[RMDB]
RNA sequence: GGGAACGACUCGAGUAGAGUCGAAAAGUGCCUCGUCGGCCCGGCAUGCCAACCUGAUCCGAAGUUCAAGGCGGUUUCUCUGGCCUUCCAGAGAGAUGCGCGUCGGAAGAACCGACGAACAAACCUUAAAACAAAACGACGUUCGCGUCGUUUUGAACUAUUGACCUCGGUUCGCCGAGGUCAAUAGAAAAGAAACAACAACAACAAC
Reactivity to 2A3 in 0.01 (KOAc 150mM, MgCl2 10mM, bicine 150mM(pH8.5), 24C), signal-to-noise 2, nucleotides 027 to 156: g070u020g050c050c000u050c040g040u020c000g000g000c000c050c000g000g020c040a030u170g010c020c060a030a060c010c020u070g020a070u080c010c020g050a120a010g040u150u170c090a040a080g070g010c040g030g000u000u060u000c000u000c000u010g000g010c080c080u290u130c000c000a010g000a010g000a000g000a020u080g120c040g010c010g030u000c020g000g020a040a040g020a060a060c000c000g000a010c020g000a020a010c040a050a060a040c040c050u150u280a070a130a030a050c030a000a000a000a000c000g000a000c000g010u010u050c270g020c020g040u010c000g000u010u030u000u000g000a000a000